Record summary:
Source: RMDB library OK3TST, as collected in RNAgym. The record gives the reactivity of an RNA of 207 nucleotides to DMS and 2A3. The DMS profile rests on 2,553 reads. Conditions: 150 mM KOAc, 10 mM MgCl2 and 150 mM bicine (pH 8.5), 24 C.
[RMDB]
RNA sequence: GGGAACGACUCGAGUAGAGUCGAAAAGUCCAUUGCCUUAUCCUCGAUCCAGCGGCGGAUCUCGCCCGUAAUCACUGAGACGGCUGUUGCUGCAGGUCCAGACACGACACCGAGCCAUGCGGGCGCUGCGCCUCUCAAUAGUCCCCCAGCAACCCAGAGAGUAUAAGUGGUUCGCCACUUAUACUCUAAAAGAAACAACAACAACAAC
Reactivity to DMS in 0.01 (KOAc 150mM, MgCl2 10mM, bicine 150mM(pH8.5), 24C), signal-to-noise 1, nucleotides 027 to 156: g020u000c020c020a180u000u000g030c040c040u050u000a060u000c020c010u000c000g030a180u020c050c040a050g000c070g030g030c050g020g020a070u000c050u010c050g030c030c000c020g000u000a080a090u000c100a100c040u020g000a150g020a140c060g030g070c000u000g000u000u000g030c020u000g000c060a080g020g030u010c030c050a070g060a090c020a090c050g020a070c020a110c030c000g000a070g030c040c010a120u010g050c070g020g000g030c030g030c030u000g000c030g020c010c010u000c030u020c030a070a120u000a170g010u000c010c020c020c000c010a110g030c050a070a300c010c010c020a140g010
Reactivity to 2A3 in 0.01 (KOAc 150mM, MgCl2 10mM, bicine 150mM(pH8.5), 24C), signal-to-noise 2, nucleotides 027 to 156: g060u010c030c020a070u050u090g010c000c020u060u110a070u140c020c000u010c020g050a080u070c050c030a040g070c080g050g000c030g030g060a050u030c080u030c040g000c000c000c000g030u020a170a110u170c060a070c200u120g030a060g010a110c040g040g030c050u020g070u040u030g030c070u000g000c030a070g010g070u000c080c020a010g050a080c050a030c200g030a000c010a020c020c040g030a030g060c010c000a040u060g000c030g010g000g030c000g010c040u050g020c040g000c000c000u010c020u010c030a000a060u030a060g140u080c040c000c000c000c000a030g030c030a050a040c030c040c020a030g100